[RMDB]
RNA sequence: GGGAACGACUCGAGUAGAGUCGAAAACUUCGACCAUUUCUGACAACGCCAAGGAGUUGUGUAAGGCAGUGUCGGUGUCCAUGGGCCUGGGUGUGGAGGCGUUGGAGCAUCUGAGUCCAGGGGAACACUGCUAUUAUAAUUUCGAUUAUAAUAGCAGAAAAGAAACAACAACAACAAC
Reactivity to DMS in 0.01 (KOAc 150mM, MgCl2 10mM, bicine 150mM(pH8.5), 24C), signal-to-noise 9, nucleotides 027 to 126: c090u000u000c060g010a100c040c050a150u000u010u000c040u000g010a080c030a040a050c050g010c030c040a090a150g010g000a100g010u000u010g010u000g010u010a090a120g010g010c120a070g010u010g010u000c020g010g010u000g000u000c030c040a070u000g010g000g010c010c020u000g000g010g020u000g010u010g010g010a090g000g010c040g010u010u000g010g010a240g000c030a030u000c020u000g000a110g010u000c010c010a050g000g010g010g010a080a060c140a140
Reactivity to 2A3 in 0.01 (KOAc 150mM, MgCl2 10mM, bicine 150mM(pH8.5), 24C), signal-to-noise 8, nucleotides 027 to 126: c010u110u080c030g060a050c010c020a090u060u120u050c030u050g030a020c010a050a020c060g020c030c020a140a090g150g030a130g090u080u080g030u080g070u120a060a070g020g020c030a030g030u010g020u090c010g020g020u050g030u000c040c020a050u050g020g010g020c000c010u030g010g020g000u040g030u070g030g060a050g030g020c030g030u060u110g050g010a060g000c010a020u010c010u020g030a020g020u000c000c010a010g030g040g020g000a030a010c050a000
Structure probing data (DMS and 2A3) for a 177-nucleotide construct.
The reactions ran in a buffer of 150 mM KOAc, 10 mM MgCl2 and 150 mM bicine (pH 8.5), at 24 C.
Reactivities are given for positions 27 through 126.
For 2A3 the reverse transcriptase was SuperScript II with manganese.